Chemical mapping of a 177-nucleotide RNA with 2A3 and DMS.
For DMS, 615 sequencing reads were counted.
The data come from the RNA Mapping Database (RMDB), library OK2TST.
The 2A3 profile rests on 905 reads.

[RMDB]
RNA sequence: GGGAACGACUCGAGUAGAGUCGAAAACUUGGCCCCAUGUUGAGGGAAUAUCUUAUUUCCGAAGCACUCCACGGCUUAGGGAUUCCCACGACACGAUCUCUCGCCGUUAUUACAACUGGUACCGAUGCGGUCGAGAAUCAUUCGUGAUUCUCGACCGAAAAGAAACAACAACAACAAC
Reactivity to 2A3 in 0.01 (KOAc 150mM, MgCl2 10mM, bicine 150mM(pH8.5), 24C), signal-to-noise 1, nucleotides 027 to 126: c010u120u120g120g000c000c080c020c000a020u030g000u000u040g020a090g000g040g030a030a030u050a100u150c100u110u140a070u030u040u000c000c000g020a020a000g020c010a100c040u060c030c000a020c060g010g030c010u070u000a030g000g030g000a010u040u020c020c000c000a040c020g040a020c020a010c060g040a080u000c040u020c000u000c080g040c020c010g050u020u110a170u120u120a100c120a060a020c070u160g000g010u030a120c020c050g020a030u140g000
Reactivity to DMS in 0.01 (KOAc 150mM, MgCl2 10mM, bicine 150mM(pH8.5), 24C), signal-to-noise 1, nucleotides 027 to 126: c070u010u010g010g040c040c010c040c120a100u010g020u040u000g000a260g010g010g000a010a040u000a020u000c140u000u000a130u000u000u000c000c000g000a270a090g000c070a070c110u020c120c130a040c250g010g000c010u010u000a020g000g000g030a250u000u000c010c000c000a090c000g010a010c070a090c080g040a030u030c080u000c040u000c230g040c050c000g000u000u000a070u020u000a130c130a050a030c030u010g070g000u000a150c050c050g000a140u000g000